RNA sequence: GGGAACGACUCGAGUAGAGUCGAAAAAUGCAAUAAUGAAUAGUCCUCAGAUGGUGGCUGCUCUUGUACGUGCCAUUUCAAAUAGCAAUGAUUUAGAAUCCACCAAAGCUGCUGUUGGCACAUUGCAAUCCCGCAUUGAAUUCGUUCAAUGCGGGAUAAAAGAAACAACAACAACAAC
Reactivity to DMS in 0.01 (KOAc 150mM, MgCl2 10mM, bicine 150mM(pH8.5), 24C), signal-to-noise 2, nucleotides 027 to 126: a050u000g020c060a020a060u010a090a070u020g000a090a090u000a130g000u010c040c030u000c050a080g000a160u000g010g030u000g000g000c070u010g000c040u000c030u000u000g020u010a050c200g010u000g040c040c050a090u010u000u000c250a070a060a030u000a050g010c010a090a160u000g000a130u010u010u000a080g000a120a210u000c030c050a030c070c030a070a100a140g030c040u000g020c050u000g000u000u000g000g100c040a040c010a040u010u000g020c020a180
The record gives the reactivity of an RNA of 177 nucleotides to DMS. Values cover nucleotides 27 to 126. For DMS the reverse transcriptase was MarathonRT. It was measured as part of the RMDB library OK2TST. The reactions ran in a buffer of 150 mM KOAc, 10 mM MgCl2 and 150 mM bicine (pH 8.5), at 24 C.